This 177-nucleotide RNA was probed chemically with 2A3 and DMS.
Source: RMDB libraries RFM100 and RFMREP, as collected in RNAgym.
2A3 adducts were read by reverse transcription with SuperScript II with manganese.
The RNA was probed in 150 mM KOAc, 10 mM MgCl2 and 150 mM bicine (pH 8.5) at 24 C.

[RMDB]
RNA sequence: GGGAACGACUCGAGUAGAGUCGAAAACAAGUUAAAUUGUCGUUCGCAGUUGUUUUAGUCGCUUUGGACUUUUGACCACGGAUGUACUGGCACUGGUGUUAAGAGCGAUAUGAGGAAGGUCGGUGCAUAAUCCUUCUAUGUUCGCAUAGAAGGAUUAAAAAGAAACAACAACAACAAC
Reactivity to 2A3 in 0.01 (KOAc 150mM, MgCl2 10mM, bicine 150mM(pH8.5), 24C), signal-to-noise 9, nucleotides 027 to 126: c040a050a010g120u170u180a110a140a150u180u100g030u030c030g010u020u020c070g000c140a030g010u050u040g050u050u060u030u100a020g000u010c040g000c120u050u030u090g050g010a040c000u080u060u050u160g090a100c000c010a040c050g040g010a070u100g020u110a050c020u020g020g000c000a010c030u040g010g000u050g050u130u130a110a030g040a010g050c020g010a020u030a070u180g070a030g040g050a030a020g030g040u070c030g000g010u030g000c010a010
Reactivity to DMS in 0.01 (KOAc 150mM, MgCl2 10mM, bicine 150mM(pH8.5), 24C), signal-to-noise 9, nucleotides 027 to 126: c040a100a130g000u020u030a060a090a120u030u020g010u000c020g000u000u000c020g000c060a080g000u010u010g010u010u000u020u010a070g010u000c030g010c050u000u000u010g010g010a070c040u010u010u010u010g010a090c010c020a050c080g000g010a080u010g010u020a050c070u000g010g010c030a030c030u000g000g010u000g010u010u020a080a080g010a050g010c010g010a040u000a050u010g010a100g000g000a060a070g000g010u000c030g020g020u000g000c120a140

Values cover nucleotides 27 to 126.